The record gives the reactivity of an RNA of 177 nucleotides to DMS and 2A3. The 2A3 profile rests on 2,421 reads. High DMS reactivity at an A or C suggests that its Watson-Crick edge is free.
RNA sequence: GGGAACGACUCGAGUAGAGUCGAAAAAGAAAUAGCGAUAAUCGUAAGAGUAAUGUCCUUCACAUAGCGCUACGCACAGAACUAUUAGUAGCGCAAUAGCUAUUGAAGGACAUUACCUGCCAAAAAAGACUGUAUUCCUGUUCGCAGGAAUACAGUCAAAAGAAACAACAACAACAAC
Reactivity to DMS in 0.01 (KOAc 150mM, MgCl2 10mM, bicine 150mM(pH8.5), 24C), signal-to-noise 2, nucleotides 027 to 126: a120g000a040a060a060u000a070g030c010g000a150u030a060a070u020c080g020u000a090a060g000a100g010u000a010a000u000g010u000c000c000u000u000c000a020c270a030u000a030g000c000g010c030u000a010c010g000c140a060c130a110g000a040a060c300u010a150u010u000a070g000u010a060g000c000g010c050a020a040u000a070g030c060u010a030u000u000g020a040a040g000g000a000c000a000u000u000a000c010c050u000g000c020c110a000a050a110a080a100a050
Reactivity to 2A3 in 0.01 (KOAc 150mM, MgCl2 10mM, bicine 150mM(pH8.5), 24C), signal-to-noise 3, nucleotides 027 to 126: a000g090a020a090a040u120a050g040c050g070a070u110a150a150u200c050g020u040a010a060g040a020g020u010a000a010u000g000u020c000c000u000u020c000a040c000a030u100a010g000c000g010c020u010a010c010g060c050a110c020a100g190a260a020c050u080a110u300u180a060g010u010a000g000c000g000c020a010a020u030a010g000c020u030a010u050u060g000a000a000g000g010a000c000a000u000u000a000c000c000u010g000c010c030a070a160a000a000a020a030
The DMS profile rests on 1,470 reads.